[RMDB]
RNA sequence: GGGAACGACUCGAGUAGAGUCGAAAACAACACGUCCUCGUCGUACAGAGUGGUAACAUGUGUCACCACAUAUCCAAGCUUGGGUACACGGGCUUGACCCAACCCCUUGGGCGGAUGGUGGUACAUGAAAAGAAGUAACACUUCGGUGUUACUUCAACGUUAUUUGUGACUUCGGUCACAAAUAACGAAAAGAAACAACAACAACAAC
Reactivity to 2A3 in 0.01 (KOAc 150mM, MgCl2 10mM, bicine 150mM(pH8.5), 24C), signal-to-noise 5, nucleotides 027 to 156: c040a020a010c030a020c060g100u090c000c020u030c040g180u030c030g040u140a050c060a070g050a010g060u090g050g070u130a120a010c010a000u010g010u000g000u010c000a000c010c000a090c070a140u210a040u060c000c000a000a020g030c030u030u020g020g000g000u020a020c030a020c050g010g000g000c010u260u300g150a300c000c000c000a000a020c000c010c000c000u000u000g000g010g000c010g010g000a020u010g010g000u000g000g000u000a000c000a000u010g010a000a010a000a010g010a000a000g010u000a000a000c010a000c000u030u040c210g080g000u000g000u000u000a000c000u000u000c000a000a000
Reactivity to DMS in 0.01 (KOAc 150mM, MgCl2 10mM, bicine 150mM(pH8.5), 24C), signal-to-noise 2, nucleotides 027 to 156: c040a090a040c100a110c080g010u000c000c030u000c050g000u000c110g040u010a090c070a160g000a210g010u000g000g000u010a050a190c030a030u000g040u000g010u000c000a030c000c020a070c050a080u020a030u010c050c010a030a200g020c070u000u000g010g020g100u000a060c110a050c080g000g040g030c000u000u010g000a160c000c010c010a090a050c020c010c020c010u000u000g000g000g030c110g020g030a090u000g000g040u000g030g010u000a040c000a010u020g000a020a110a100a120g020a010a030g000u000a010a000c010a010c010u000u000c270g060g000u000g010u000u010a000c000u010u000c000a020a130
The record gives the reactivity of an RNA of 207 nucleotides to 2A3 and DMS. The reactions ran in a buffer of 150 mM KOAc, 10 mM MgCl2 and 150 mM bicine (pH 8.5), at 24 C. For 2A3 the reverse transcriptase was SuperScript II with manganese. The 2A3 profile rests on 5,166 reads.